[RMDB]
RNA sequence: GGGAACGACUCGAGUAGAGUCGAAAAGAUAUGGAUGUAGAGCUCAACAGCUACAUUUCGGAAACGAAAUAAGUAGACAUGAGCCUACAUCCUAAGUCAAACUCAUGGUCGUUCGCGACCAUGAGAACGCAGUAAAGAAGUUCGCUUCUUUACUGCGAAAAGAAACAACAACAACAAC
Reactivity to 2A3 in 0.01 (KOAc 150mM, MgCl2 10mM, bicine 150mM(pH8.5), 24C), signal-to-noise 6, nucleotides 027 to 126: g000a010u010a000u080g000g020a010u000g010u010a020g040a100g090c000u000c050a230a300c110a300g040c010u010a000c000a030u000u000u010c000g000g000a020a000a000c020g030a030a010a000u300a300a100g010u010a010g010a050c200a300u250g000a000g000c000c000u000a000c000a010u030c000c000u000a000a000g010u000c040a070a070a160c010u000c000a000u000g000g000u020c000g000u050u080c260g010c030g140a000c000c010a000u000g000a000g000a010a000
Reactivity to DMS in 0.01 (KOAc 150mM, MgCl2 10mM, bicine 150mM(pH8.5), 24C), signal-to-noise 3, nucleotides 027 to 126: g000a010u000a050u010g000g000a000u000g000u000a010g000a150g030c000u010c000a170a180c110a190g000c020u000a000c010a130u000u000u000c000g020g010a030a010a030c000g000a010a020a010u000a090a150g020u000a010g040a020c140a090u010g010a020g010c000c000u000a010c000a000u000c000c000u000a000a030g000u020c000a130a110a200c000u000c000a010u000g010g030u000c000g010u000u010c300g020c010g000a020c000c000a000u000g000a010g010a060a090